[RMDB]
RNA sequence: GGGAACGACUCGAGUAGAGUCGAAAACCCUUAGCAUUCGUGCUAAGGGAAAUAACGGUCGGCUCAAGCAGCUAGUCGAAAAUGCUGCUCGACCUUUUGGUAAAAUCUGGCCGUUCGCGGCCAGAAACUAUUCUCGAACAUUCGUGUUCGAGAAUAGAAAAGAAACAACAACAACAAC
Reactivity to 2A3 in 0.01 (KOAc 150mM, MgCl2 10mM, bicine 150mM(pH8.5), 24C), signal-to-noise 2, nucleotides 027 to 126: c010c000c000u000u000a000g000c000a030u000u080c190g090u070g000c000u000a000a010g010g000g020a040a120a030u120a060a040c080g010g010u020c000g010g030c040u030c260a020a010g000c000a000g000c020u030a010g210u270c060g070a070a100a030a040u140g000c000u000g020c010u000c010g010a000c000c000u000u050u050u050g070g000u090a000a030a020a110u010c010u010g020g030c000c010g020u030u050c250g010c010g070g010c000c000a000g000a000a000a000
Reactivity to DMS in 0.01 (KOAc 150mM, MgCl2 10mM, bicine 150mM(pH8.5), 24C), signal-to-noise 3, nucleotides 027 to 126: c020c000c000u010u030a000g030c000a050u000u010c200g020u000g010c000u000a010a010g010g010g000a010a020a030u000a060a060c180g010g000u000c010g010g000c090u000c180a140a050g010c000a010g020c000u000a230g010u000c210g010a100a070a060a070u000g000c000u000g010c000u010c010g000a010c000c000u000u000u000u010g010g010u010a050a070a110a110u000c000u000g000g020c000c000g020u000u020c210g010c020g010g000c010c000a010g000a000a040a080